RNA sequence: GGGAACGACUCGAGUAGAGUCGAAAAGAGCCGAACCGCAAUGUGACACCUUCGUCGGGCUGCACGCGGAUGACCAUCGCGUUGGUGCCCAGCUCGUCGGUCAUGGUGGCGUCGAACGGCAGAUGCGCCUCAUGGUAUCCUUCGGGAUACCAUGAGGAAAAGAAACAACAACAACAAC
Reactivity to 2A3 in 0.01 (KOAc 150mM, MgCl2 10mM, bicine 150mM(pH8.5), 24C), signal-to-noise 2, nucleotides 027 to 126: g100a010g010c020c010g020a030a010c040c000g000c050a070a120u180g030u090g090a030c000a020c000c000u080u110c010g030u000c010g000g000g020c000u070g040c010a020c000g000c030g050g030a020u110g130a060c050c010a100u110c000g000c010g090u020u130g100g050u120g060c030c020c000a010g000c010u000c000g000u000c020g030g020u100c070a090u160g060g000u000g050g030c000g000u030c030g040a140a180c000g020g000c040a020g000a100u110g070c060g030
Reactivity to DMS in 0.01 (KOAc 150mM, MgCl2 10mM, bicine 150mM(pH8.5), 24C), signal-to-noise 3, nucleotides 027 to 126: g000a230g010c020c050g010a120a260c060c010g000c050a090a120u000g010u010g000a290c040a030c030c020u010u020c060g020u000c030g000g020g010c020u000g030c110a030c010g000c000g000g030a060u000g000a110c150c120a160u000c000g030c070g010u000u000g040g010u000g020c140c250c020a050g000c010u000c000g070u010c030g020g000u000c150a070u010g010g040u000g010g020c010g020u000c090g000a080a130c030g010g030c020a120g000a120u010g010c110g000